[RMDB]
RNA sequence: GGGAACGACUCGAGUAGAGUCGAAAACCAGUUGGCCGGGCAGCCGCGCCUUACCAAUGUCGAAAGACGGUAAGGUGAGGAAAGUCCGGGCUCCACGGAAAUACGGUGCCGGAUAACGUCCGGCGGGCGUGGGUAAUGCUUUCGAGCAUUACCCACGAAAAGAAACAACAACAACAAC
Reactivity to DMS in 0.01 (KOAc 150mM, MgCl2 10mM, bicine 150mM(pH8.5), 24C), signal-to-noise 2, nucleotides 027 to 126: c010c020a200g030u020u000g000g000c000c000g000g000g020c010a180g010c010c040g050c030g000c000c000u000u000a010c000c040a220a230u050g030u000c000g000a200a090a100g010a070c000g000g010u010a000a030g050g040u000g000a040g010g000a040a060a130g000u000c010c000g000g000g000c010u040c000c040a110c210g000g000a100a080a100u010a140c130g030g030u020g020c000c010g030g000a010u010a060a060c200g000u000c000c000g010g000c050g010g000g020
Reactivity to 2A3 in 0.01 (KOAc 150mM, MgCl2 10mM, bicine 150mM(pH8.5), 24C), signal-to-noise 2, nucleotides 027 to 126: c010c000a020g060u090u030g040g000c010c020g000g000g000c000a050g080c000c020g030c000g000c000c000u010u010a000c000c000a230a220u300g010u030c010g000a080a000a020g000a000c000g000g000u000a000a000g020g000u000g020a040g000g040a100a170a000g000u000c000c000g010g010g000c070u020c000c010a060c060g150g100a100a060a090u280a120c070g120g020u120g020c020c010g000g030a020u030a140a100c040g040u000c000c030g010g000c000g000g010g010

Overview
The record gives the reactivity of an RNA of 177 nucleotides to DMS and 2A3. Source: RMDB library RFM100, as collected in RNAgym. The reactions ran in a buffer of 150 mM KOAc, 10 mM MgCl2 and 150 mM bicine (pH 8.5), at 24 C. For DMS the reverse transcriptase was MarathonRT.